[RMDB]
RNA sequence: GGGAACGACUCGAGUAGAGUCGAAAAUACACUAAUGAUAAGAACACAGGGAUAGGAGCUUUGUACCUGGAAGGAUUACUAUGUGAAUUUUGCUCAGGAGUGUUAAGAGACACAAAGAAUGAAGAUUAUAUCAUUCAUGAGUUUAUACCUAUCGUAACGGUAACGGUAUAUUCGUAUACCGUUACCGAAAAGAAACAACAACAACAAC
Reactivity to 2A3 in 0.01 (KOAc 150mM, MgCl2 10mM, bicine 150mM(pH8.5), 24C), signal-to-noise 4, nucleotides 027 to 156: u150a000c050a020c050u110a060a130u120g080a090u050a110a040g080a170a020c060a020c050a110g060g000g020a010u090a050g030g020a030g030c020u050u100u140g050u060a040c000c000u020g020g020a010a040g050g020a030u080u020a040c030u080a070u160g010u040g050a040a030u010u070u080u110g000c010u010c010a000g030g070a060g030u040g010u060u100a110a020g050a010g030a030c010a000c020a030a110a010g010a010a000u050g010a000a020g030a090u250u170a090u130a030u160c010a010u010u000c000a010u040g010a000g010u030u060u010a070u040a030c010c050u050a050u160c050g060u010a070a010
Reactivity to DMS in 0.01 (KOAc 150mM, MgCl2 10mM, bicine 150mM(pH8.5), 24C), signal-to-noise 3, nucleotides 027 to 156: u010a110c020a140c030u000a140a100u000g020a230u000a050a110g030a080a110c060a110c060a090g000g000g000a140u000a060g020g020a080g030c060u000u000u000g040u000a100c000c040u000g000g010a100a100g030g020a090u010u000a070c050u000a090u000g000u000g010a050a120u000u000u000u000g020c010u010c030a050g010g010a080g030u000g000u000u000a040a160g000a230g000a030c040a050c030a090a060a080g020a060a040u000g000a050a170g020a240u000u000a100u010a140u010c020a060u000u000c010a110u000g000a140g020u000u010u020a090u010a060c030c000u000a120u000c050g000u010a070a260